The record gives the reactivity of an RNA of 177 nucleotides to DMS. The RNA was probed in 150 mM KOAc, 10 mM MgCl2 and 150 mM bicine (pH 8.5) at 24 C. Values cover nucleotides 27 to 126. The data come from the RNA Mapping Database (RMDB), library M2PK50.

[RMDB]
RNA sequence: GGGAACGACUCGAGUAGAGUCGAAAAAGAAUCUCCUUCGGGAGAUUCUGAACCACUAAGCUGAUUGCGGAUGACGACGUGGCAGCUCGUGUCGAGCAACCACCGAGAACAGGUUCGCCUGUUCUAAAACCAUUCAUGCCUUCGGGCAUGAAUGGUUAAAAGAAACAACAACAACAAC
Reactivity to DMS in 0.01 (KOAc 150mM, MgCl2 10mM, bicine 150mM(pH8.5), 24C), signal-to-noise 1, nucleotides 027 to 126: a040g000a020a000u000c000u000c000c010u010u000c100g060g040g000a010g000a010u000u000c000u000g000a040a170c010c010a110c130u000a080a170g030c050u010g000a090u010u000g040c060g010g000a090u000g040a140c050g010a090c080g000u000g010g080c120a100g000c010u000c010g050u000g030u000c060g000a040g020c090a060a110c010c010a040c050c070g000a100g000a040a000c000a040g010g040u010u010c270g000c010c020u000g000u000u010c000u010a020a050